RNA sequence: GGGAACGACUCGAGUAGAGUCGAAAAAGGUCCAGAUUGAGCGCGUGCUGGGAUCCGCGGAUCUGCUCGACCGGGCCUGACAACCGAGGUCAUGGCGGCAGUAGGUAAUGCACCCAGGCGCCACCGGGCCUCACAUUAUUUUCGAAUAAUGUGAGGCAAAAGAAACAACAACAACAAC
Reactivity to DMS in 0.01 (KOAc 150mM, MgCl2 10mM, bicine 150mM(pH8.5), 24C), signal-to-noise 6, nucleotides 027 to 126: a060g010g020u000c020c020a130g000a200u010u010g010a090g020c110g030c030g030u000g020c020u000g010g010g010a080u010c170c190g010c050g010g010a090u000c010u000g000c010u000c030g010a180c010c010g010g000g000c010c000u010g020a050c070a040a070c100c070g000a030g000g020u010c010a090u000g010g010c020g010g010c020a010g010u000a060g010g000u010a070a080u020g020c060a120c000c000c010a040g000g000c010g010c010c020a030c080c060g000g010
Reactivity to 2A3 in 0.01 (KOAc 150mM, MgCl2 10mM, bicine 150mM(pH8.5), 24C), signal-to-noise 6, nucleotides 027 to 126: a000g060g000u040c030c000a040g090a240u120u210g060a090g030c130g000c010g030u200g190c020u020g000g020g050a100u110c090c060g020c030g010g020a060u020c010u020g000c040u100c100g160a280c040c000g010g020g010c000c000u020g010a030c050a110a060c070c060g110a040g000g000u020c060a150u210g010g000c010g000g000c010a010g010u070a030g040g060u090a100a050u130g000c020a050c010c000c010a000g010g020c000g000c010c010a010c030c030g060g100
About this RNA:
Structure probing data (DMS and 2A3) for a 177-nucleotide construct. The DMS profile rests on 9,155 reads. The RNA was probed in 150 mM KOAc, 10 mM MgCl2 and 150 mM bicine (pH 8.5) at 24 C.